[RMDB]
Structure probing data (DMS and 2A3) for a 207-nucleotide construct. For DMS the reverse transcriptase was MarathonRT.

RNA sequence: GGGAACGACUCGAGUAGAGUCGAAAACACUCCUUCGGGAGUGCAUAUUCCUAAGUCAUACAAGAGCGACCACAGGACAUGAGCGUCGGAAACGACGCUCAACAGCCUGUGGAGAACGCUUGAUGUAUGAUAUGGAUCGACGCCUGUUCGCAGGCAAAAUCUGCUCCUAUUUCGAUAGGAGCAGAUUAAAAGAAACAACAACAACAAC
Reactivity to DMS in 0.01 (KOAc 150mM, MgCl2 10mM, bicine 150mM(pH8.5), 24C), signal-to-noise 1, nucleotides 027 to 156: c000a010c010u000c000c000u000u010c300g040g050g020a030g000u000g020c020a080u000a140u000u000c000c000u020a140a170g000u010c000a010u000a020c010a020a300g020a000g050c000g030a300c000c000a060c080a010g000g000a030c040a260u000g000a010g040c000g070u000c000g030g000a070a140a300c000g010a000c000g060c000u000c000a000a010c020a170g010c000c010u000g010u000g000g020a030g000a030a130c050g000c000u020u000g010a190u000g000u000a020u010g000a050u000a160u000g030g000a100u000c000g000a110c120g010c000c000u000g000u010u000c140g070c000a060g000g040c000a060a050
Reactivity to 2A3 in 0.01 (KOAc 150mM, MgCl2 10mM, bicine 150mM(pH8.5), 24C), signal-to-noise 2, nucleotides 027 to 156: c010a000c000u000c000c020u020u100c220g130g020g000a020g030u040g010c000a160u180a190u210u060c010c000u050a140a040g010u000c000a000u010a000c010a090a000g000a010g050c020g300a300c020c010a010c020a000g000g070a070c030a090u110g000a010g050c000g020u000c000g010g000a050a080a050c020g010a000c000g020c000u000c000a010a000c000a000g040c010c000u000g000u000g000g010a000g000a020a000c000g000c030u000u000g010a030u180g000u030a030u000g020a000u020a100u070g090g030a050u170c190g130a070c120g030c010c010u000g040u100u060c220g040c090a000g030g040c000a010a000
The RNA was probed in 150 mM KOAc, 10 mM MgCl2 and 150 mM bicine (pH 8.5) at 24 C.